[RMDB]
RNA sequence: GGGAACGACUCGAGUAGAGUCGAAAAGCCAUGCGCAGGAGUCGUUCGAUUUCUGGCAUCUGUCGGCUUUCCAAAGAGAUACCUCUUAUCUUGUAAAGUCGCUUGAUCGGUAUGAAAUUCGGACUGACGCCCGAUACGAUUUCGAUCGUAUCGGGCGAAAAGAAACAACAACAACAAC
Reactivity to 2A3 in 0.01 (KOAc 150mM, MgCl2 10mM, bicine 150mM(pH8.5), 24C), signal-to-noise 1, nucleotides 027 to 126: g030c000c000a010u080g000c140g020c030a030g000g050a040g050u000c000g000u040u040c000g000a000u020u020u020c030u090g100g060c020a010u010c000u030g210u100c030g000g000c000u000u020u000c120c030a070a070a000g030a000g060a050u200a200c190c050u090c000u070u290a070u000c010u030u000g030u030a000a000a000g000u000c000g010c050u050u130g000a030u000c150g000g100u140a070u210g000a000a060a080u300u140c050g010g010a020c040u040g030a010